[RMDB]
RNA sequence: GGGAACGACUCGAGUAGAGUCGAAAAGAUAUGGACGAUAGGGAGCUAUAGGUCGGAAACGACCUACUAGCAUCGAUCUAUGUCCUAAGUCAAAACCAUCGUGAGAUCUUCGGAUCUCACGAUGGAACACUGCUAGUUCCUUCGGGAACUAGCAGUGAAAAGAAACAACAACAACAAC
Reactivity to DMS in 0.01 (KOAc 150mM, MgCl2 10mM, bicine 150mM(pH8.5), 24C), signal-to-noise 2, nucleotides 027 to 126: g020a030u000a140u000g000g000a070c010g000a030u000a020g000g010g000a010g000c000u000a020u000a020g020g020u000c010g000g000a060a070a120c020g000a000c020c000u000a000c220u010a010g000c000a140u000c120g000a060u020c000u010a020u010g020u000c000c000u000a040a140g010u010c010a070a140a120a160c000c000a010u000c000g030u000g000a020g030a000u000c010u010u020c250g020g010a000u000c000u000c000a000c020g000a000u000g000g010a020a080
Reactivity to 2A3 in 0.01 (KOAc 150mM, MgCl2 10mM, bicine 150mM(pH8.5), 24C), signal-to-noise 1, nucleotides 027 to 126: g030a010u070a030u080g020g020a010c100g110a080u010a020g040g000g010a040g000c010u010a000u000a020g010g000u000c020g030g000a070a080a030c020g000a000c000c010u000a010c020u000a000g000c020a130u140c010g010a020u060c000u000a020u030g010u000c010c000u020a170a000g080u000c020a020a020a040a190c000c000a010u010c000g000u010g000a020g000a000u000c030u070u200c300g140g020a010u010c000u000c000a000c010g000a000u010g000g000a000a000
This 177-nucleotide RNA was probed chemically with DMS and 2A3. Reactivities are given for positions 27 through 126. DMS adducts were read by reverse transcription with MarathonRT. Source: RMDB library TTRDEL, as collected in RNAgym. For DMS, 1,347 sequencing reads were counted. The reactions ran in a buffer of 150 mM KOAc, 10 mM MgCl2 and 150 mM bicine (pH 8.5), at 24 C.